RNA sequence: GGGAACGACUCGAGUAGAGUCGAAAAGAUGAAGUUCGCCAUUCAAACAACCCUUUCUGCACCGGUCCUGUGCUGCCCGUUGCCUGCAGGAGCAAAACACACCCACUCCGUGUCCGGCUCCAAGAUUGGUGUAGAAGUGUUUCGACACUUCUACACCAAAAGAAACAACAACAACAAC
Reactivity to DMS in 0.01 (KOAc 150mM, MgCl2 10mM, bicine 150mM(pH8.5), 24C), signal-to-noise 2, nucleotides 027 to 126: g010a170u030g010a070a060g010u000u000c040g000c080c050a220u000u000c090a190a090a170c120a080a050c020c010c000u030u000u000c010u000g020c010a110c010c050g020g000u000c010c050u000g010u000g010c020u020g000c020c040c000g000u000u000g030c040c050u010g030c110a110g000g000a020g000c100a060a010a080a070c070a130c100a120c040c020c030a140c050u000c020c050g030u000g020u000c070c110g000g000c000u000c050c050a060a060g050a080u030u010
Reactivity to 2A3 in 0.01 (KOAc 150mM, MgCl2 10mM, bicine 150mM(pH8.5), 24C), signal-to-noise 4, nucleotides 027 to 126: g110a040u150g020a080a030g050u080u060c000g020c040c010a060u080u090c030a050a070a100c030a050a090c040c000c000u010u070u040c030u020g000c030a030c020c030g010g040u030c000c010u060g040u070g050c030u020g030c010c000c000g070u080u090g050c000c010u050g010c010a050g010g060a010g010c020a020a070a120a010c070a000c000a030c020c010c000a060c020u020c030c020g010u000g020u030c000c030g030g000c000u000c010c000a030a010g060a130u050u050
An RNA of 177 nucleotides, treated with DMS and 2A3 and read out base by base. High 2A3 reactivity points to a flexible backbone, as in loops and unpaired stretches. For 2A3 the reverse transcriptase was SuperScript II with manganese. Values are in units of 0.01, from 0 to 300, in steps of 10. The data come from the RNA Mapping Database (RMDB), libraries RFM100 and RFMREP.